[RMDB]
RNA sequence: GGGAACGACUCGAGUAGAGUCGAAAAGCCCAUAUGUUCGCAUAUGGGCAAAACCAGAUCUGAGCAUGCGAGCUCUCUGCGACAAAAGUCAACGCAAUAAAAAAACACGUCACUUCGGUGACGUGAAGGAGUAUACUUGGUUCGCCAAGUAUACUCCAAAAGAAACAACAACAACAAC
Reactivity to DMS in 0.01 (KOAc 150mM, MgCl2 10mM, bicine 150mM(pH8.5), 24C), signal-to-noise 2, nucleotides 027 to 126: g020c000c000c010a000u000a000u000g000u000u020c180g050c010a000u000a000u000g000g010g000c000a010a030a050a190c050c000a100g010a090u000c080u000g010a040g000c020a130u000g020c090g010a160g010c010u000c010u000c060u000g020c080g000a080c130a080a090a150a090g000u000c080a090a060c090g020c050a050a140u060a040a000a040a040a040a100a140c000a010c020g000u000c000a010c000u000u000c220g070g000u000g000a010c010g020u020g000a030a040
Reactivity to 2A3 in 0.01 (KOAc 150mM, MgCl2 10mM, bicine 150mM(pH8.5), 24C), signal-to-noise 4, nucleotides 027 to 126: g000c000c020c000a000u000a000u000g000u000u060c210g000c100a000u020a000u010g000g010g000c010a020a000a010a020c020c000a030g030a090u050c050u130g000a000g030c040a050u140g100c080g120a060g000c020u000c020u020c060u070g040c040g060a070c070a090a240a030a020g080u120c030a090a060c050g020c060a060a080u230a240a150a020a010a000a000a010c020a000c020g010u010c010a010c000u050u090c220g090g000u000g000a000c000g000u000g000a000a010
Conditions: 150 mM KOAc, 10 mM MgCl2 and 150 mM bicine (pH 8.5), 24 C. An RNA of 177 nucleotides, treated with DMS and 2A3 and read out base by base.